[RMDB]
An RNA of 177 nucleotides, treated with DMS and 2A3 and read out base by base. The RNA was probed in 150 mM KOAc, 10 mM MgCl2 and 150 mM bicine (pH 8.5) at 24 C. DMS adducts were read by reverse transcription with MarathonRT.
RNA sequence: GGGAACGACUCGAGUAGAGUCGAAAAGUGGAUAGUUUCGACUAUCCACACAACUGAUGAUCAUACAGUGGAGGAUGAAGAAGAUGGCCAUCGGAUCCUCAAAUAGCACAGAGUUCGCUCUGUGCAAAGAACGGAUUGGAUUCGUCCAAUCCGUUCUAAAAGAAACAACAACAACAAC
Reactivity to DMS in 0.01 (KOAc 150mM, MgCl2 10mM, bicine 150mM(pH8.5), 24C), signal-to-noise 2, nucleotides 027 to 126: g020u000g010g010a010u010a020g000u000u000u010c130g010a060c000u000a010u000c000c000a000c010a020c130a040a090c010u000g000a060u020g000a040u000c030a010u000a140c070a090g020u000g020g020a080g000g000a090u020g000a100a100g000a100a050g000a050u000g010g010c070c010a060u000c000g000g000a080u000c010c000u030c140a030a050a070u000a130g000c000a000c010a000g000a020g020u000u010c210g030c000u000c000u000g000u000g010c000a020a030
Reactivity to 2A3 in 0.01 (KOAc 150mM, MgCl2 10mM, bicine 150mM(pH8.5), 24C), signal-to-noise 3, nucleotides 027 to 126: g000u000g000g010a000u020a010g000u030u040u110c170g030a010c010u000a000u020c000c000a010c000a000c000a000a010c010u040g010a020u040g000a020u040c010a020u070a230c020a080g070u100g110g140a090g090g010a110u150g120a060a160g040a040a020g040a060u040g020g000c020c010a000u020c030g030g030a020u000c030c010u090c040a040a090a040u110a010g000c000a000c010a000g000a000g000u020u060c150g030c050u020c000u000g010u010g000c000a010a010